RNA sequence: GGGAACGACUCGAGUAGAGUCGAAAAGAAAGAAAGAAAGAAAGGUAUGAAGUCCUAUUCACACGGGAUAGGAUAAACUUCAUAUUGAUCGUGUAUGUGCUAACGCACAUACACGAAUGCGCAUGCAGAACUGCAUGCAUGAACAUACUGUGUGCAACUACUACGACGGAUUCGUCCGUCGUAGUAGAAAAGAAACAACAACAACAAC
Reactivity to DMS in 0.01 (KOAc 150mM, MgCl2 10mM, bicine 150mM(pH8.5), 24C), signal-to-noise 1, nucleotides 027 to 156: g020a180a090a130g020a150a110a110g010a130a160a110g050a120a150a130g010g020u000a050u000g000a050a050g000u000c020c000u000a020u000u000c030a150c130a160c210g050g000g000a050u000a000g000g000a090u000a070a100a110c010u000u000c020a000u000a020u020u030g010a110u000c000g050u000g020u000a000u030g010u020g000c000u000a110a290c300g000c000a000c020a010u000a000c020a010c000g020a020a000u000g000c060g020c030a010u000g040c050a060g020a050a140c090u020g020c030a050u000g020c020a000u000g020a060a080c050a060u000a250c020u000g030u000g050u000g000c080a090a110
Reactivity to 2A3 in 0.01 (KOAc 150mM, MgCl2 10mM, bicine 150mM(pH8.5), 24C), signal-to-noise 4, nucleotides 027 to 156: g060a000a080a010g090a030a050a020g060a070a070a020g080a060a070a020g040g000u010a000u010g010a000a000g000u000c000c000u010a000u010u020c030a040c020a020c160g070g000g000a010u010a000g010g000a020u120a080a080a010c000u000u000c000a000u010a000u040u060g060a060u020c010g010u000g000u000a000u000g030u000g000c050u150a160a040c180g000c000a010c000a000u000a000c000a000c010g000a000a010u040g010c030g000c000a000u010g000c010a010g080a300a060c210u040g000c000a010u010g010c020a020u090g050a050a020c040a030u180a070c030u030g010u010g010u020g070c040a080a050
Chemical mapping of a 207-nucleotide RNA with DMS and 2A3.
The data come from the RNA Mapping Database (RMDB), library OK3TST.
The RNA was probed in 150 mM KOAc, 10 mM MgCl2 and 150 mM bicine (pH 8.5) at 24 C.
The 2A3 profile rests on 4,344 reads.
Values are in units of 0.01, from 0 to 300, in steps of 10.